The data come from the RNA Mapping Database (RMDB), library M2PK90. An RNA of 177 nucleotides, treated with DMS and 2A3 and read out base by base. Values cover nucleotides 27 to 126. In probing experiments dimethyl sulfate is read out at A N1 and C N3, which are open when not base-paired. DMS adducts were read by reverse transcription with MarathonRT.
RNA sequence: GGGAACGACUCGAGUAGAGUCGAAAAAUUGUGCGGUCUCUGAGAGAGGAGAACCUGUCUGAGAGAGCUUACCGCUUUUCAUAGUGGCUCUCUGACAGACUCUGAGGCUCCUCUCGUUCCCAACCAAUAGUAGUAAGGGUUUCGACCCUUACUACUAAAAAGAAACAACAACAACAAC
Reactivity to DMS in 0.01 (KOAc 150mM, MgCl2 10mM, bicine 150mM(pH8.5), 24C), signal-to-noise 4, nucleotides 027 to 126: a090u010u010g020u000g010c070g010g000u000c040u000c060u010g010a250g010a030g010a040g010g000a020g000a060a070c030c020u010g000u000c010u000g010a050g000a020g000a030g010c120u000u010a100c070c080g010c090u000u010u020u000c190a100u010a030g020u000g020g010c010u000c010u000c010u010g000a150c000a010g000a030c010u000c160u000g010a130g000g000c000u000c010c000u000c010u000c000g010u000u000c000c000c000a130a090c210c140a060a140
Reactivity to 2A3 in 0.01 (KOAc 150mM, MgCl2 10mM, bicine 150mM(pH8.5), 24C), signal-to-noise 3, nucleotides 027 to 126: a000u130u100g040u090g050c060g050g010u050c030u000c030u180g050a060g010a000g000a000g080g020a020g020a090a120c010c020u020g010u000c010u060g010a010g000a000g000a010g010c040u110u150a070c040c050g050c160u080u080u090u140c170a170u180a110g030u060g030g010c000u020c000u000c010u010g050a050c000a000g000a010c000u020c140u200g060a070g000g020c000u000c000c010u000c000u000c000g010u010u000c020c000c010a000a020c010c010a050a090